[RMDB]
Source: RMDB library RNAMAK, as collected in RNAgym. Chemical mapping of a 207-nucleotide RNA with 2A3 and DMS. 2A3 adducts were read by reverse transcription with SuperScript II with manganese. DMS adducts were read by reverse transcription with MarathonRT. The DMS profile rests on 3,526 reads.

RNA sequence: GGGAACGACUCGAGUAGAGUCGAAAACACUGCUCUUCGGAGCAGUGAAAAUCCUAAGUCGAGCAUCGAUCUCCUACUUCGCUUGGACCUAUCGGAAACGAUAGCUAGCGAAUCGGAGGGAGCUCGAUAUGGAAAAACUCAGCCCUUCGGGGCUGAGGAUGCAGUAUAUCUUCGGAUAUACUGCAUCAAAAGAAACAACAACAACAAC
Reactivity to 2A3 in 0.01 (KOAc 150mM, MgCl2 10mM, bicine 150mM(pH8.5), 24C), signal-to-noise 5, nucleotides 027 to 156: c000a000c000u000g020c000u010c010u040u120c300g140g000a000g000c000a000g000u000g000a000a000a000a020u010c010c000u030a110a020g010u000c000g000a010g000c020a290u190c060g090a130u020c020u010c010c000u070a110c140u020u010c000g020c010u080u130g080g120a210c020c000u000a000u010c000g030g080a130a050a030c010g000a000u000a010g010c010u010a000g000c000g010a010a010u030c030g000g000a010g000g000g000a000g000c000u000c000g000a000u010a050u030g000g010a020a070a070a050a050c000u000c000a000g000c000c010c000u030u070c240g050g000g000g000c000u000g000a000g010
Reactivity to DMS in 0.01 (KOAc 150mM, MgCl2 10mM, bicine 150mM(pH8.5), 24C), signal-to-noise 2, nucleotides 027 to 156: c010a020c000u000g020c000u010c000u000u020c300g070g000a010g060c000a030g020u010g000a040a030a050a160u000c000c010u000a120a260g010u000c000g000a050g020c000a180u010c110g000a110u010c000u000c000c000u010a180c270u000u020c000g030c020u010u000g080g000a090c280c010u000a010u000c010g040g000a270a140a280c050g020a000u000a030g010c020u000a010g030c000g000a020a010u010c300g000g000a060g000g020g000a050g000c010u000c010g000a030u000a080u000g030g010a080a110a070a050a300c000u000c000a010g000c000c000c000u010u010c300g080g070g020g020c000u000g020a000g020